Record summary:
This 177-nucleotide RNA was probed chemically with DMS and 2A3.
RNA sequence: GGGAACGACUCGAGUAGAGUCGAAAAGCUAUCAUGCAAACUAGGGCUGGCUACUCUAGCACAGAAUCACAUCCCGAUAAUCAACAGUGCUAGAAGGUUGAUUAUACCAUUUAAUAUGCCGAGGCCACCUCCACAAUUACUUCGGUAAUUGUGGAGGAAAAGAAACAACAACAACAAC
Reactivity to DMS in 0.01 (KOAc 150mM, MgCl2 10mM, bicine 150mM(pH8.5), 24C), signal-to-noise 1, nucleotides 027 to 126: g050c030u000a070u020c130a090u030g000c070a080a170a190c140u000a090g000g060g030c040u030g020g020c050u000a260c080u000c000u000a000g020c010a000c000a060g000a120a190u000c180a070c150a120u000c000c010c000g000a060u000a010a020u000c070a070a080c060a070g000u000g000c000u000a030g000a060a060g000g000u000u000g000a030u000u000a060u000a050c150c040a090u030u040u010a070a080u000a050u000g020c020c020g010a050g030g000c070c050a160
Reactivity to 2A3 in 0.01 (KOAc 150mM, MgCl2 10mM, bicine 150mM(pH8.5), 24C), signal-to-noise 1, nucleotides 027 to 126: g020c010u040a050u300c040a050u300g040c030a130a000a040c040u050a090g190g000g000c010u000g000g020c010u030a010c000u040c000u000a000g000c030a030c000a020g210a090a140u150c050a070c010a150u000c000c010c000g020a050u060a050a070u050c020a000a070c010a060g030u000g120c000u000a000g030a020a020g030g020u000u010g000a110u010u070a000u010a020c010c000a020u200u180u070a110a080u130a050u140g060c080c070g060a110g010g000c010c000a030

Record summary: In probing experiments dimethyl sulfate is read out at A N1 and C N3, which are open when not base-paired. For 2A3 the reverse transcriptase was SuperScript II with manganese. The data come from the RNA Mapping Database (RMDB), library RFMREP.